[RMDB]
RNA sequence: GGGAACGACUCGAGUAGAGUCGAAAAUCAAAGAGCGUACAGCACACUCAGACUGUACGACAGUCUGACACACACGUACGCUAGUCCAACGAGAGAGUGAGAGCGUUGGAACAAGUGUGUGAAAAAACAGAGCAACGCUAUUCGUAGCGUUGCUCUGAAAAGAAACAACAACAACAAC
Reactivity to DMS in 0.01 (KOAc 150mM, MgCl2 10mM, bicine 150mM(pH8.5), 24C), signal-to-noise 2, nucleotides 027 to 126: u020c080a020a120a150g030a090g040c020g020u010a010c020a180g020c040a070c130a120c270u020c000a000g000a010c000u000g010u000a150c280g010a130c000a020g010u000c010u000g020a100c010a040c020a020c030a060c050g020u000a000c010g000c010u000a040g000u000c020c000a000a050c030g000a060g000a210g000a140g010u000g000a130g010a090g000c020g010u000u010g000g000a010a100c200a040a080g010u010g040u000g000u000g000a000a070a060a050a100a040
Reactivity to 2A3 in 0.01 (KOAc 150mM, MgCl2 10mM, bicine 150mM(pH8.5), 24C), signal-to-noise 2, nucleotides 027 to 126: u150c050a080a050a020g140a030g040c020g010u020a000c000a040g020c090a030c010a010c110u040c000a000g010a040c000u020g020u150a190c070g040a020c040a000g010u000c000u020g040a010c000a000c000a000c020a000c070g050u060a010c010g000c010u010a010g020u000c010c000a000a000c000g010a010g010a000g000a020g210u190g100a120g010a010g050c020g000u000u020g020g040a020a020c040a070a030g020u020g000u010g020u050g040a060a040a000a000a010a000